[RMDB]
Annotation: The data come from the RNA Mapping Database (RMDB), library TTRDES. The record gives the reactivity of an RNA of 177 nucleotides to DMS. Reactivities are given for positions 27 through 126. The reactions ran in a buffer of 150 mM KOAc, 10 mM MgCl2 and 150 mM bicine (pH 8.5), at 24 C.
RNA sequence: GGGAACGACUCGAGUAGAGUCGAAAAAAAAGAUAUGGAACUCCCAGCGCGAAGACAGUGAUCUACCCACCUGCUUUCGGAAACGAAAGCAGAGGAUCAUCGAGUGCUGGAGUUCCUAAGUCAAAAACAUUCCCUAGGUGUUCGCACCUAGGGAAUGAAAAGAAACAACAACAACAAC
Reactivity to DMS in 0.01 (KOAc 150mM, MgCl2 10mM, bicine 150mM(pH8.5), 24C), signal-to-noise 1, nucleotides 027 to 126: a180a040a100a170g010a030u010a030u010g000g000a050a020c000u000c300c030c020a000g020c000g050c010g010a080a050g010a020c300a050g000u000g010a000u000c000u000a060c020c020c060a130c120c000u000g000c000u000u020u000c010g050g030a000a010a000c000g000a000a000a000g010c000a000g000a000g010g000a000u000c000a000u010c000g000a010g010u000g000c020u000g010g000a050g010u010u000c000c000u000a000a040g020u030c000a050a040a070a080a100